[RMDB]
RNA sequence: GGGAACGACUCGAGUAGAGUCGAAAAGUACCAGAGGCGGCACUCGCUGAAGCUCAUGCGUGCCAUGUCAACGUACAGCCAGGCCUUCUUAGUCGUCGACACAUCAGCGCCAGGCUGGCGCGUGCUGAGUCAAAUGCCGAUUCGUCGGCAUUUGACUAAAAGAAACAACAACAACAAC
Reactivity to 2A3 in 0.01 (KOAc 150mM, MgCl2 10mM, bicine 150mM(pH8.5), 24C), signal-to-noise 1, nucleotides 027 to 126: g010u000a040c020c020a000g000a060g090g130c020g030g010c030a000c050u060c030g000c050u060g090a100a060g050c030u040c110a060u200g000c000g040u070g090c060c020a000u050g060u030c020a000a080c050g050u050a060c090a000g060c030c010a050g060g020c050c000u130u040c090u100u050a050g040u030c000g040u040c030g020a020c030a000c000a110u180c070a010g000c000g000c050c010a030g140g000c030u030g020g000c000g040c000g010u040g030c000u030g050
Reactivity to DMS in 0.01 (KOAc 150mM, MgCl2 10mM, bicine 150mM(pH8.5), 24C), signal-to-noise 2, nucleotides 027 to 126: g030u060a160c000c030a140g050a170g010g030c060g010g010c000a000c010u000c060g000c010u000g020a120a130g010c050u000c080a120u010g020c030g000u000g000c100c160a080u000g000u000c030a070a060c060g000u000a050c080a060g010c070c090a090g000g010c080c090u000u000c050u020u000a100g000u000c040g000u010c050g000a050c080a080c160a160u000c160a100g000c050g030c010c040a210g020g020c050u000g000g000c000g010c070g000u000g000c040u010g000